Annotation
The record gives the reactivity of an RNA of 207 nucleotides to 2A3 and DMS. Conditions: 150 mM KOAc, 10 mM MgCl2 and 150 mM bicine (pH 8.5), 24 C. The 2A3 profile rests on 4,369 reads.
[RMDB]
RNA sequence: GGGAACGACUCGAGUAGAGUCGAAAAACAUGCUGGCCAGCCCAACCCCACGAUCCUCCAUCGGCAUGAUCAUGAUGUGUUCUCAAAUAUCAGGCCAGUAAAUCACCAUGCUCGUGCUGGUAAAGGCAACUUAUGCCCAAGUUCGCUUGGGCAUAAACUCCGUAGUAGAAUUCGUUCUACUACGGAGAAAAGAAACAACAACAACAAC
Reactivity to 2A3 in 0.01 (KOAc 150mM, MgCl2 10mM, bicine 150mM(pH8.5), 24C), signal-to-noise 3, nucleotides 027 to 156: a000c050a010u090g000c000u000g000g020c000c010a040g010c040c030c020a050a090c030c010c010c020a060c070g050a130u060c000c030u040c070c030a050u030c020g010g000c020a010u010g000a010u010c000a000u020g060a050u070g040u010g030u080u020c060u010c040a060a100a020u240a120u170c100a060g020g000c000c000a000g010u020a010a030a040u100c010a010c030c000a000u020g000c010u000c010g020u010g000c010u010g010g000u030a130a100a010g020g000c020a050a030c030u020u000a000u000g000c000c000c030a000a000g010u030u060c060g010c140u000u010g020g010g000c000a010u000a000a000a010
Reactivity to DMS in 0.01 (KOAc 150mM, MgCl2 10mM, bicine 150mM(pH8.5), 24C), signal-to-noise 1, nucleotides 027 to 156: a080c030a110u000g020c010u000g020g000c010c000a210g050c050c020c040a160a160c060c010c000c010a140c180g000a150u000c020c010u000c030c030a090u000c020g010g000c010a030u010g020a050u010c040a030u000g000a040u010g030u000g020u000u010c040u000c040a120a080a110u010a110u000c110a110g000g010c040c010a080g000u010a030a050a050u000c010a030c010c000a030u000g020c110u010c040g010u000g000c000u010g040g050u020a040a030a040g000g070c110a030a050c100u000u000a020u000g020c000c000c010a020a070g010u000u000c220g000c010u000u000g000g000g000c030a010u010a010a010a170